[RMDB]
RNA sequence: GGGAACGACUCGAGUAGAGUCGAAAACCUCAAAUGAUGUGCAUUGAGGGGCACUGGCAAAGGGCCAAUUAGGUAAAGAAUGUGCUUUUGGUGCAGAAGGGUAGGGCCAGAGUGAUGGAGGGAAAGCAGAGAGAGUGAAGAGGGAACUGGGACAUGAGUAUCAUGCUGAGUUCGCUCAGCAUGAUACAAAAGAAACAACAACAACAAC
Reactivity to 2A3 in 0.01 (KOAc 150mM, MgCl2 10mM, bicine 150mM(pH8.5), 24C), signal-to-noise 2, nucleotides 027 to 156: c010c000u040c030a120a130a030u150g040a040u080g070u120g060c050a060u030u150g050a060g000g030g030g000c070a020c030u030g020g010c040a050a110a110g050g020g000c010c020a050a080u130u130a050g000g030u120a050a060a040g050a050a180u120g020u040g020c000u060u090u040u080g030g030u030g000c040a030g040a130a050g060g020g000u060a050g020g030g000c010c000a020g030a000g040u070g070a050u090g000g050a030g010g030g000a050a010a030g060c010a030g030a010g000a000g000a020g040u080g020a020a020g000a020g050g000g020a030a040c030u030g010g020g020a000c010a080u050g040a030
Annotation:
The record gives the reactivity of an RNA of 207 nucleotides to 2A3. Values are in units of 0.01, from 0 to 300, in steps of 10. The reactions ran in a buffer of 150 mM KOAc, 10 mM MgCl2 and 150 mM bicine (pH 8.5), at 24 C.